This 177-nucleotide RNA was probed chemically with 2A3 and DMS.
Source: RMDB library OK1LIB, as collected in RNAgym.
RNA sequence: GGGAACGACUCGAGUAGAGUCGAAAAGAUGAGGUUAAGAACUAGAGAGAACUCGAGACGCGUGAUGAAGCUCAAGAGAAAACGCGAGACUGAGCAAGUGUGCUAGACGAAGCACACAAGAGGAAGACGAUAUAGCCGUGUUCGCACGGCUAUAUCGAAAAGAAACAACAACAACAAC
Reactivity to 2A3 in 0.01 (KOAc 150mM, MgCl2 10mM, bicine 150mM(pH8.5), 24C), signal-to-noise 3, nucleotides 027 to 126: g080a030u170g030a020g090g010u060u200a100a060g010a070a020c080u100a070g030a010g000a000g030a180a000c000u000c050g020a050g020a010c070g020c010g040u030g010a140u150g020a120a010g000c030u030c050a080a010g080a000g000a090a120a000a040c040g010c000g010a020g040a070c080u060g000a000g020c030a060a080g000u000g000u010g000c010u040a020g040a070c170g140a100a000g000c020a000c000a000c010a010a030g070a030g030g000a060a000g060a010
Reactivity to DMS in 0.01 (KOAc 150mM, MgCl2 10mM, bicine 150mM(pH8.5), 24C), signal-to-noise 3, nucleotides 027 to 126: g020a100u000g020a070g000g020u000u010a110a090g000a090a050c100u010a080g010a090g010a140g010a080a070c000u000c010g010a090g030a070c090g050c060g010u000g000a100u030g020a080a100g040c060u020c080a120a110g000a090g000a120a020a090a040c030g010c060g000a060g040a130c040u020g020a030g040c110a100a110g030u000g000u000g010c000u000a070g010a170c300g020a100a010g000c010a000c000a000c000a070a100g000a080g000g010a060a100g010a210

DMS adducts were read by reverse transcription with MarathonRT.